[RMDB]
RNA sequence: GGGAACGACUCGAGUAGAGUCGAAAACUGCAACGGAAUUCAGGGCACGGAGUCGGUGCCAGAUCGUGCGGCUUCGGCGCCAGUUCGUGCGAGAGCUUCGCUCGCGAACUCUUCGUGGAACGGCCGUCGCUCGUGGAUCGGCCGUCUUCCGGGUUCCACUUCGGUAAGGUUUCGACCUUACCGAAGUAAAAGAAACAACAACAACAAC
Reactivity to 2A3 in 0.01 (KOAc 150mM, MgCl2 10mM, bicine 150mM(pH8.5), 24C), signal-to-noise 2, nucleotides 027 to 156: c030u100g030c050a160a060c120g100g090a080a080u190u140c030a150g030g030g030c050a020c050g000g000a000g010u030c000g000g030u060g110c130c040a080g000a000u040c040g060u090g060c020g010g040c000u000u020c010g040g000c040g070c120c010a110g010u030u020c080g070u080g000c050g010a010g000a000g000c140u000u000c010g020c040u090c150g090c030g010a010a000c000u030c050u300u140c030g000u050g040g000a000a000c020g000g000c000c020g000u000c000g000c080u250c030g000u070g020g010a000u000c000g010g000c010c000g010u020c010u120u040c010c000g000g000g000u180u140c000c010
Structure probing data (2A3) for a 207-nucleotide construct. The data come from the RNA Mapping Database (RMDB), library VIROID. For 2A3 the reverse transcriptase was SuperScript II with manganese.